RNA sequence: GGGAACGACUCGAGUAGAGUCGAAAAUGGUUACCUCUCAGCCCCUCCACCUUGGGGUGCCCUAUCCGAGCACUGCUGCUUCGGUAGAAAGGCUAAGAACGUCGCAAUGACGUAAGGUGGGACUUUUCCCUACGGUUCGAGCGGUCGAACCAGAGGGCAUUGAUGUGGCGUUCGCGCCACAUCAAUGAAAAGAAACAACAACAACAAC
Reactivity to 2A3 in 0.01 (KOAc 150mM, MgCl2 10mM, bicine 150mM(pH8.5), 24C), signal-to-noise 2, nucleotides 027 to 156: u120g060g020u080u140a100c000c000u050c000u000c020a060g010c000c010c010c000u020c000c010a010c010c000u000u010g000g000g000g000u060g000c000c000c000u000a010u000c020c000g020a000g000c000a050c210u280g080c020u010g010c010u250u100c030g010g010u000a000g010a010a030a000g020g000c010u010a050a040g020a090a060c010g010u010c000g000c160a250a180u300g000a000c010g010u000a010a010g000g000u010g000g000g000a030c020u160u010u080u080c000c000c020u030a060c040g000g000u000u010c000g010a070g060c140g110g170u030c010g020a000a000c000c000a010g060a010g050g020g030